This 177-nucleotide RNA was probed chemically with DMS and 2A3. Conditions: 150 mM KOAc, 10 mM MgCl2 and 150 mM bicine (pH 8.5), 24 C. It was measured as part of the RMDB library M2PK50. Values cover nucleotides 27 to 126. For 2A3, 23,970 sequencing reads were counted. DMS adducts were read by reverse transcription with MarathonRT.
RNA sequence: GGGAACGACUCGAGUAGAGUCGAAAACUCCAUUGCUUCGGCAAUGGAGAAAGAGGACGUGAGACCGAAACGGAGGUAGGUCCAACUACCUUCUCACAAAAAAAACGCUUAGGUUCGCCUAAGCGAAGUAAGAUAGAAAGUUCGCUUUCUAUCUUACAAAAGAAACAACAACAACAAC
Reactivity to DMS in 0.01 (KOAc 150mM, MgCl2 10mM, bicine 150mM(pH8.5), 24C), signal-to-noise 7, nucleotides 027 to 126: c010u000c000c000a010u000u000g010c010u000u010c200g020g010c000a010a010u000g010g000a010g000a010a060a110g000a080g020g020a090c100g010u000g010a040g010a230c040c010g000a070a120a190c190g000g010a010g010g000u000a020g000g010u010c140c150a080a190c010u000a010c000c000u000u000c000u000c030a030c050a010a000a000a040a060a080a090a130c010g010c000u000u000a010g000g000u000u010c220g010c000c000u000a000a010g000c000g000a010a030
Reactivity to 2A3 in 0.01 (KOAc 150mM, MgCl2 10mM, bicine 150mM(pH8.5), 24C), signal-to-noise 7, nucleotides 027 to 126: c000u000c000c000a000u000u000g000c000u040u050c170g130g000c000a010a010u010g000g010a000g000a000a010a000g030a010g040g030a020c070g040u040g020a040g030a040c050c050g090a160a150a020c130g120g010a010g020g000u010a010g010g030u060c070c010a060a090c000u010a010c000c000u060u010c010u020c010a030c050a020a030a040a010a000a000a020a030c010g000c000u000u000a000g020g030u040u030c220g100c030c000u000a000a000g000c010g000a010a000